[RMDB]
This 207-nucleotide RNA was probed chemically with 2A3. The reactions ran in a buffer of 150 mM KOAc, 10 mM MgCl2 and 150 mM bicine (pH 8.5), at 24 C. The data come from the RNA Mapping Database (RMDB), library OK3TST.

RNA sequence: GGGAACGACUCGAGUAGAGUCGAAAAGUGGCGGGGGGAGGAUGAAACGCUCUUUUCCUUCACCGCUACCACCGCCUCCUCCUCCUCUUCCGUCGCCAGAGGGAUCUGCACCCUCCCGGUCUCUGCGUCGUACAGGAGCGGGCGGGAGCACAGCCUCCCAUACUUGGGCUUUCGAGCCCAAGUAUGGAAAAGAAACAACAACAACAAC
Reactivity to 2A3 in 0.01 (KOAc 150mM, MgCl2 10mM, bicine 150mM(pH8.5), 24C), signal-to-noise 1, nucleotides 027 to 156: g070u050g000g050c040g030g010g000g030g000g000a000g000g040a010u050g020a090a140a040c070g050c020u050c060u140u090u060u040c070c000u060u010c110a110c030c000g010c070u000a000c000c000a010c020c020g040c020c010u040c020c070u000c000c000u020c020c010u090c000u130u030c030c000g010u000c000g010c030c020a010g000a020g020g000g010a080u040c000u060g000c040a020c020c000c000u030c000c010c010g200g110u050c120u010c010u070g010c030g270u270c030g040u160a070c060a010g000g020a060g070c000g000g000g000c010g030g000g000a010g010c010a020c000a030g060c000c000u020c000